[RMDB]
RNA sequence: GGGAACGACUCGAGUAGAGUCGAAAAGACGAGAGUAUUGCGGCAGCUCAAAGGCGGAAAGACAAAAACUGCGCACAAGAACAAUAUAGUUGAACCGCCAACACGAAGCGAGAUCGUGAAGGUAGAACCCUAGGUCGGUCUUCGGACCGACCUAGGGAAAAGAAACAACAACAACAAC
Reactivity to 2A3 in 0.01 (KOAc 150mM, MgCl2 10mM, bicine 150mM(pH8.5), 24C), signal-to-noise 1, nucleotides 027 to 126: g140a080c160g000a000g000a000g150u080a010u110u170g000c000g000g000c000a100g000c060u100c100a090a090a000g010g000c000g000g000a190a300a000g030a000c050a010a040a000a000a050c000u080g000c030g050c000a000c010a080a030g010a100a000c030a170a000u290a000u170a130g000u000u020g000a030a030c070c020g020c000c000a000a020c030a060c050g030a000a000g060c050g020a000g060a180u000c000g120u060g000a000a000g000g000u000a000g000a130a000